Structure probing data (2A3 and DMS) for a 207-nucleotide construct. The reactions ran in a buffer of 150 mM KOAc, 10 mM MgCl2 and 150 mM bicine (pH 8.5), at 24 C. It was measured as part of the RMDB library OK3TST. Values cover nucleotides 27 to 156.

[RMDB]
RNA sequence: GGGAACGACUCGAGUAGAGUCGAAAACACGUACGCGCGGUACAUGGCCAAUAGGUUUACCCUUGAGCCGAACGACAGGUGGCUUCUCCUGUACGUGUACAUGAUUAUAACUCUGAGCGAGCGACCCCUGUCUCUCGACACGGUGUACGGGCGCGUCUAAUAACUAGAGAUUCGUCUCUAGUUAUUAAAAAGAAACAACAACAACAAC
Reactivity to 2A3 in 0.01 (KOAc 150mM, MgCl2 10mM, bicine 150mM(pH8.5), 24C), signal-to-noise 9, nucleotides 027 to 156: c080a010c030g100u170a010c010g010c000g000c010g030g010u010a020c020a080u120g040g000c040c030a110a150u140a160g050g040u150u190u290a180c020c000c000u010u040g040a040g010c010c020g010a050a020c030g020a010c010a010g000g040u090g120g030c070u120u030c020u070c030c020u050g050u130a060c040g020u050g020u050a040c040a090u180g050a130u150u220a080u110a230a050c020u020c050u090g070a040g060c100g020a000g000c060g120a280c030c020c010c040u040g010u010c010u010c010u010c030g090a090c020a030c160g050g000u010g000u020a010c000g030g130g000c010g000c000g010u010c010
Reactivity to DMS in 0.01 (KOAc 150mM, MgCl2 10mM, bicine 150mM(pH8.5), 24C), signal-to-noise 7, nucleotides 027 to 156: c040a070c060g020u000a030c010g020c020g020c000g020g020u000a050c030a050u010g030g040c030c050a090a130u000a060g020g020u000u000u000a130c140c010c010u000u000g010a120g030c000c010g010a060a090c040g010a050c020a030g000g030u010g020g010c060u010u000c040u000c020c020u010g010u000a030c080g010u000g020u000a070c090a120u010g010a170u000u000a120u000a070a090c050u000c030u000g010a110g020c090g010a050g020c040g000a100c010c010c000c040u000g010u000c010u010c050u000c030g010a060c020a140c040g020g020u000g000u000a050c020g020g030g030c010g030c020g010u000c060